Chemical mapping of a 177-nucleotide RNA with 2A3. For 2A3 the reverse transcriptase was SuperScript II with manganese. The reactions ran in a buffer of 150 mM KOAc, 10 mM MgCl2 and 150 mM bicine (pH 8.5), at 24 C. It was measured as part of the RMDB library OK1LIB. Values cover nucleotides 27 to 126.
RNA sequence: GGGAACGACUCGAGUAGAGUCGAAAAGCGAAUGCCCAACCUGUGUCUUGACCGCUUACAGAAGGAAGACCCCUACAGCGCAGAACUGGCGCAGUUGGUGGGAAUUUGCCUCGAAGUUUUGAGACGCAUACCUAGGUCGCUUCGGCGACCUAGGUAUAAAAGAAACAACAACAACAAC
Reactivity to 2A3 in 0.01 (KOAc 150mM, MgCl2 10mM, bicine 150mM(pH8.5), 24C), signal-to-noise 2, nucleotides 027 to 126: g100c060g140a090a070u280g010c010c000c000a000a000c000c030u020g000u040g000u020c020u060u070g000a010c000c050g050c070u030u100a060c020a030g190a250a000g180g000a030a040g120a130c080c010c000c000u000a000c000a010g010c000g000c030a040g010a270a130c170u190g010g000c010g010c000a000g000u050u090g000g040u180g000g000g080a000a060u190u140u080g000c010c000u030c050g030a050a000g000u000u000u120u080g100a060g000a000c010g000c010